[RMDB]
RNA sequence: GGGAACGACUCGAGUAGAGUCGAAAAUGUGUUGCCCAGGCUGGUCUCAAACUCCUGGCCUCAAGCAGUUCUCCUGCCUCAGCCUCCCAAAUUGCUGUGACUGUAGGUGUGAGCCACUGCACUGGGCGCUUUCUAUGUAGUUCGCUACAUAGAAAGCAAAAGAAACAACAACAACAAC
Reactivity to DMS in 0.01 (KOAc 150mM, MgCl2 10mM, bicine 150mM(pH8.5), 24C), signal-to-noise 4, nucleotides 027 to 126: u020g000u010g010u000u010g010c040c010c000a030g000g010c040u000g000g010u000c030u010c080a050a040a100c080u000c030c020u000g010g010c050c030u020c120a070a090g020c050a060g010u000u010c040u000c040c030u000g010c020c010u000c050a030g010c030c030u000c020c030c020a050a060a110u000u000g010c030u000g010u000g010a060c020u000g010u010a040g020g010u000g020u010g000a070g000c050c070a030c120u010g000c020a110c030u000g000g000g030c050
Reactivity to 2A3 in 0.01 (KOAc 150mM, MgCl2 10mM, bicine 150mM(pH8.5), 24C), signal-to-noise 3, nucleotides 027 to 126: u160g060u020g000u050u130g010c000c020c000a000g010g010c030u020g000g040u060c000u020c100a090a090a110c040u040c030c040u080g050g010c000c000u060c060a040a030g000c010a010g040u040u040c020u020c010c010u010g020c010c000u020c000a010g010c000c030u080c020c040c030a040a140a110u210u210g050c060u050g020u050g040a090c010u030g110u210a030g000g020u040g010u010g030a010g020c010c070a060c060u040g010c030a100c050u030g000g040g010c010

Chemical mapping of a 177-nucleotide RNA with DMS and 2A3. The reactions ran in a buffer of 150 mM KOAc, 10 mM MgCl2 and 150 mM bicine (pH 8.5), at 24 C. The DMS profile rests on 6,942 reads. Source: RMDB library OK2TRN, as collected in RNAgym. 2A3 adducts were read by reverse transcription with SuperScript II with manganese. High 2A3 reactivity points to a flexible backbone, as in loops and unpaired stretches.